Notes:
An RNA of 207 nucleotides, treated with DMS and 2A3 and read out base by base. The reactions ran in a buffer of 150 mM KOAc, 10 mM MgCl2 and 150 mM bicine (pH 8.5), at 24 C.
RNA sequence: GGGAACGACUCGAGUAGAGUCGAAAAUCUACGUGCCCGCGGUAAGUGAGACCCUGUUCUACUAUGUUUACACUUCGUGGUGCCAAGCUCUGCGCUUCUCGGAGACAAAGGUGCUCAUCGAAGCGGCCCUCAAGCAGUUCGUGCACGACAGCCAGCAACGCAGGAAUAAUUUCGAUUAUUCCUGCGUAAAAGAAACAACAACAACAAC
Reactivity to DMS in 0.01 (KOAc 150mM, MgCl2 10mM, bicine 150mM(pH8.5), 24C), signal-to-noise 2, nucleotides 027 to 156: u020c030u010a040c050g000u010g000c080c020c020g030c040g010g000u000a040a080g020u000g010a160g000a110c010c050c020u000g010u000u000c030u000a040c030u020a080u000g000u020u000u010a110c040a070c020u000u000c040g060u000g000g060u010g060c010c040a070a240g010c020u000c030u000g010c070g020c110u000u010c060u000c080g030g010a100g020a110c050a060a150a160g010g000u030g030c030u030c040a110u000c030g000a060a130g030c020g030g000c060c040c030u000c050a110a100g000c020a050g010u010u000c090g030u000g000c050a060c030g000a090c000a160g020c030c040a070g000c040a170
Reactivity to 2A3 in 0.01 (KOAc 150mM, MgCl2 10mM, bicine 150mM(pH8.5), 24C), signal-to-noise 3, nucleotides 027 to 156: u060c010u040a050c060g040u080g010c020c020c000g020c000g030g030u120a050a040g000u010g020a040g010a030c000c050c020u050g100u090u060c070u120a160c040u090a050u200g090u020u070u070a030c040a010c030u020u040c000g010u030g070g030u030g040c000c010a020a020g020c020u020c040u060g050c030g010c020u070u080c060u030c040g040g010a040g020a060c090a030a220a050g070g030u150g020c020u030c040a140u100c060g020a000a000g010c000g050g000c020c000c000u080c040a070a060g010c010a000g030u070u070c040g050u120g020c000a020c050g110a040c000a020g040c040c010a000g100c020a030